RNA sequence: GGGAACGACUCGAGUAGAGUCGAAAAUCGCCUACGUGACGGUCAAAGAUGGGCUACAUUUUCUAUUAUAGAAUAGACAAACGGAUACCACUCUGAAAUGGGUGGUUGAAGGCGGAUUUAGUAGUAACAUUUCACGAUCGUUCGCGAUCGUGAAAUGAAAAGAAACAACAACAACAAC
Reactivity to DMS in 0.01 (KOAc 150mM, MgCl2 10mM, bicine 150mM(pH8.5), 24C), signal-to-noise 3, nucleotides 027 to 126: u020c030g050c000c000u010a090c100g000u000g020a090c090g000g020u000c010a150a220a110g040a090u000g000g020g000c060u030a110c070a090u020u000u000u000c000u000a050u030u010a210u050a080g020a060a010u000a090g000a030c250a040a090a130c000g000g000a090u000a000c010c000a000c000u020c000u000g030a130a130a130u010g000g000g000u000g010g010u000u010g000a300a020g000g000c110g000g000a070u020u010u000a060g020u020a020g010u010a080a200
Reactivity to 2A3 in 0.01 (KOAc 150mM, MgCl2 10mM, bicine 150mM(pH8.5), 24C), signal-to-noise 2, nucleotides 027 to 126: u030c000g000c000c000u040a040c010g100u110g060a090c020g000g020u060c020a060a120a000g040a020u120g000g040g000c020u040a010c070a160u030u070u010u000c000u020a080u000u060a110u120a260g190a120a090u030a010g000a000c020a000a220a000c010g000g000a000u040a010c000c020a000c000u000c010u000g020a020a040a060u140g000g000g000u040g000g000u000u000g000a000a000g020g030c000g040g030a000u070u060u100a160g000u020a050g000u000a060a050
Source information:
Chemical mapping of a 177-nucleotide RNA with DMS and 2A3. For 2A3, 869 sequencing reads were counted. Conditions: 150 mM KOAc, 10 mM MgCl2 and 150 mM bicine (pH 8.5), 24 C.